Source information
This 177-nucleotide RNA was probed chemically with DMS and 2A3. For DMS, 2,398 sequencing reads were counted. Source: RMDB library M2PK50, as collected in RNAgym. Conditions: 150 mM KOAc, 10 mM MgCl2 and 150 mM bicine (pH 8.5), 24 C. Reactivities are given for positions 27 through 126.

[RMDB]
RNA sequence: GGGAACGACUCGAGUAGAGUCGAAAAGCGUUUAGCUUCGGCUAAACGCAAAUAAGCUGACCAGCUAUGAGGUCAUACAUCGUCAUAGCACAAAGAUAGAGAAAACACCUCUGUUCGCAGAGGUGAACUAAACUGGUUACUUCGGUAACCAGUUUAGAAAAGAAACAACAACAACAAC
Reactivity to DMS in 0.01 (KOAc 150mM, MgCl2 10mM, bicine 150mM(pH8.5), 24C), signal-to-noise 3, nucleotides 027 to 126: g020c000g010u000u000u000a000g010c010u000u010c200g020g010c000u000a000a000a010c000g020c000a010a040a050u000a100a150g000c200u000g020a010c020c010a240g010c010u000a010u000g010a020g000g020u000c010a040u020a070c210a040u010c180g010u000c000a010u000a010g030c010a200c300a060a050a030g010a120u000a090g010a100g000a070a090a100a170c000a010c000c010u000c000u000g010u010u020c180g010c000a010g010a010g010g010u000g010a010a070
Reactivity to 2A3 in 0.01 (KOAc 150mM, MgCl2 10mM, bicine 150mM(pH8.5), 24C), signal-to-noise 2, nucleotides 027 to 126: g010c000g000u000u000u000a000g000c020u010u020c160g060g010c000u010a010a000a000c000g000c000a000a010a000u000a000a000g100c080u030g010a000c010c000a010g010c000u010a010u000g000a010g000g030u000c020a030u160a180c050a120u160c130g050u000c010a010u010a010g080c050a010c040a020a100a000g120a090u300a050g150a000g070a120a060a020a030c010a000c000c010u010c000u010g010u060u100c210g020c060a000g000a000g000g000u010g000a000a000